[RMDB]
RNA sequence: GGGAACGACUCGAGUAGAGUCGAAAAUGAAAGCUGUGUGAGCGAGGCGGGCGGACGAUGAGGCCGUGCCCGGGCUCUGGCUGCAGCCGCCCGGGGACACGCCGUGCACCCUCGGGCUCCGGAAAAACGAAGGAACAAGAUUCGUCUUGUUCCUUCGAAAAGAAACAACAACAACAAC
Reactivity to 2A3 in 0.01 (KOAc 150mM, MgCl2 10mM, bicine 150mM(pH8.5), 24C), signal-to-noise 2, nucleotides 027 to 126: u190g030a080a070a040g020c060u040g040u020g040u070g180a010g050c020g010a040g050g020c040g030g070g030c040g010g010a030c030g050a080u150g060a090g020g050c070c030g020u040g040c010c000c010g010g020g000c040u080c100u080g080g000c030u130g080c070a040g020c010c020g020c000c030c020g000g000g020g000a020c010a010c000g060c050c000g000u000g010c020a060c000c010c010u030c010g030g060g000c000u030c010c030g090g050a080a100a020a000a000
Reactivity to DMS in 0.01 (KOAc 150mM, MgCl2 10mM, bicine 150mM(pH8.5), 24C), signal-to-noise 4, nucleotides 027 to 126: u010g020a070a090a110g010c040u000g020u010g010u000g010a060g010c060g010a060g020g010c100g010g010g020c000g000g000a030c060g010a130u000g020a160g000g020c060c040g010u000g000c000c010c000g010g000g010c030u010c130u000g020g000c060u020g000c120a090g010c040c090g010c000c000c000g010g000g010g000a060c020a040c040g010c050c060g020u010g020c080a090c090c000c010u000c020g000g000g010c030u000c020c020g000g010a040a040a060a100a150
Source: RMDB library M2PK90, as collected in RNAgym. This 177-nucleotide RNA was probed chemically with 2A3 and DMS. For DMS, 4,439 sequencing reads were counted. High 2A3 reactivity points to a flexible backbone, as in loops and unpaired stretches.